Chemical mapping of a 207-nucleotide RNA with DMS and 2A3. The data come from the RNA Mapping Database (RMDB), library OK3TST. Conditions: 150 mM KOAc, 10 mM MgCl2 and 150 mM bicine (pH 8.5), 24 C.

RNA sequence: GGGAACGACUCGAGUAGAGUCGAAAAUGGGACGACGCUGACCUGGUAUGCGCGUGCGAUCUUCACUGCCGUUUCAACGGUAACCGUGUCAUCGCGCAACUGCCUAGCGAGUGUGGCUACUGGGAUUCUGGAAUUGAUUGCAAUCUGACGGUCGGAAAUCUCACUAUUCAUUCGUGAAUAGUGAGAUAAAAGAAACAACAACAACAAC
Reactivity to DMS in 0.01 (KOAc 150mM, MgCl2 10mM, bicine 150mM(pH8.5), 24C), signal-to-noise 3, nucleotides 027 to 156: u010g010g000g010a110c040g020a080c040g020c020u000g030a100c040c030u020g060g030u000a070u010g020c020g040c080g040u000g020c030g080a040u000c060u000u010c050a090c030u010g010c020c010g010u000u020u000c180a120a140c010g010g020u000a020a050c080c090g000u000g020u000c300a080u000c000g000c000g000c020a070a070c020u000g000c020c000u000a100g010c010g000a060g040u000g020u000g010g030c010u010a060c050u000g010g020g020a080u010u000c050u010g010g010a070a130u010u000g000a110u000u000g010c040a040a100u000c030u000g010a060c030g030g050u010c010g000g010a040a120
Reactivity to 2A3 in 0.01 (KOAc 150mM, MgCl2 10mM, bicine 150mM(pH8.5), 24C), signal-to-noise 6, nucleotides 027 to 156: u110g010g000g020a020c040g010a020c010g040c050u050g050a100c020c020u030g000g030u100a110u220g030c050g000c020g020u030g020c080g030a030u010c080u080u050c050a010c040u030g000c020c010g040u110u240u230c200a190a050c000g020g000u040a080a070c080c060g000u020g020u040c030a040u040c000g000c000g000c020a030a070c050u070g000c000c020u050a030g030c020g050a050g020u100g020u030g040g020c020u040a020c030u050g000g020g020a040u090u000c030u080g010g070a080a060u080u080g060a100u030u130g020c020a020a070u020c040u050g040a040c040g030g000u020c010g020g030a050a180